RNA sequence: GGGAACGACUCGAGUAGAGUCGAAAAGAAAUCAAGAUUCAUGCAUUUCAGUGACAGAUGUUCAAAUUCAGAAGAAAAUCUCUGUUUGAGUUUGUCUUUGCCUUGUAAUACGUAUUUGUCACUAGGCACGAACUAGGAGAUUCGUCUCCUAGUUCGUAAAAGAAACAACAACAACAAC
Reactivity to DMS in 0.01 (KOAc 150mM, MgCl2 10mM, bicine 150mM(pH8.5), 24C), signal-to-noise 5, nucleotides 027 to 126: g010a060a070a090u010c090a090a110g000a150u000u000c090a110u000g000c050a040u010u010u000c130a030g010u000g000a030c010a020g010a020u000g000u000u000c080a020a030a050u000u000c040a080g000a030a040g010a040a050a080a060u010c060u000c010u000g010u000u010u000g000a030g010u000u000u000g020u000c040u010u000u010g010c230c100u010u000g000u010a050a060u000a060c180g010u000a030u000u000u000g010u000c010a010c000u000a060g010g010c090
Reactivity to 2A3 in 0.01 (KOAc 150mM, MgCl2 10mM, bicine 150mM(pH8.5), 24C), signal-to-noise 4, nucleotides 027 to 126: g030a030a090a020u110c050a040a060g050a130u100u110c020a050u150g030c010a020u000u080u180c090a030g010u020g000a010c000a010g030a030u030g050u080u070c030a020a050a060u050u050c020a010g010a020a000g030a050a130a070a130u080c050u000c000u080g280u230u140u140g010a010g010u010u020u030g100u000c000u040u030u060g040c020c050u070u080g090u130a090a080u060a160c080g040u090a080u040u040u050g000u020c000a000c010u010a000g080g000c040